RNA sequence: GGGAACGACUCGAGUAGAGUCGAAAAGAAGAGAAUAAGCUUGUUAGUGGCGUGUCCGUCCGCAGCUGGCAAGCAAAACCGCAUACAAAGCGGAAUAAAGGACGGCUUAGACGCGAAGAAGACGCGACGUGACGUAAUGGUUCGCCAUUACGUCACGAAAAGAAACAACAACAACAAC
Reactivity to 2A3 in 0.01 (KOAc 150mM, MgCl2 10mM, bicine 150mM(pH8.5), 24C), signal-to-noise 1, nucleotides 027 to 126: g200a040a010g010a000g000a000a300u190a250a010g040c000u010u000g010u020u140a010g000u030g300g000c200g120u250g090u000c000c000g010u000c000c000g030c010a000g000c020u030g000g000c030a000a000g000c090a000a000a000a000c000c000g000c000a000u080a300c120a000a100a000g000c000g000g020a040a030u220a100a050a000g060g010a000c000g000g010c020u100u100a070g030a030c000g000c000g000a030a050g080a070a060g060a030c000g000c000g060a120
This 177-nucleotide RNA was probed chemically with 2A3. Values cover nucleotides 27 to 126. The data come from the RNA Mapping Database (RMDB), library OK1LIB. The reactions ran in a buffer of 150 mM KOAc, 10 mM MgCl2 and 150 mM bicine (pH 8.5), at 24 C. For 2A3, 558 sequencing reads were counted.